An RNA of 177 nucleotides, treated with DMS and 2A3 and read out base by base. For DMS the reverse transcriptase was MarathonRT. As a SHAPE reagent, 2A3 marks flexible, mostly unpaired nucleotides at the ribose 2'-OH. Conditions: 150 mM KOAc, 10 mM MgCl2 and 150 mM bicine (pH 8.5), 24 C.

RNA sequence: GGGAACGACUCGAGUAGAGUCGAAAAGAUGAGACUCUUGCUGUACGCGAAUAGCAGCGUUAGUUGGAGUACUGACGCUUGAAUACGUGUAUUCAAGGUGUAGUUCUCCAACUACACCGGUCUCAGAGAUAGGUGAGUAGUUCGCUACUUAUCUAUCAAAAGAAACAACAACAACAAC
Reactivity to DMS in 0.01 (KOAc 150mM, MgCl2 10mM, bicine 150mM(pH8.5), 24C), signal-to-noise 9, nucleotides 027 to 126: g010a130u010g000a020g000a010c000u010c120u020u020g020c030u000g000u010a070c160g010c150g010a100a070u020a090g010c020a020g000c050g010u020u000a000g010u000u000g000g010a040g010u000a000c000u000g010a020c020g010c000u000u000g000a030a010u000a030c050g020u010g020u000a010u000u000c010a010a020g010g010u020g030u010a020g000u000u000c010u010c020c020a000a010c000u000a000c120a040c100c150g000g000u000c000u000c000a030g000a150
Reactivity to 2A3 in 0.01 (KOAc 150mM, MgCl2 10mM, bicine 150mM(pH8.5), 24C), signal-to-noise 9, nucleotides 027 to 126: g120a070u060g000a000g000a010c000u030c020u050u080g010c020u020g040u100a060c120g050c050g150a150a100u100a040g010c010a000g000c010g030u030u010a000g000u000u010g020g010a010g000u010a000c000u030g060a010c000g020c150u010u010g000a000a000u030a030c090g100u150g030u130a010u000u010c010a010a010g050g040u060g040u050a000g000u010u020c010u000c010c000a000a000c000u000a000c000a010c010c030g000g000u000c000u000c000a010g000a000
Source: RMDB library OK1LIB, as collected in RNAgym.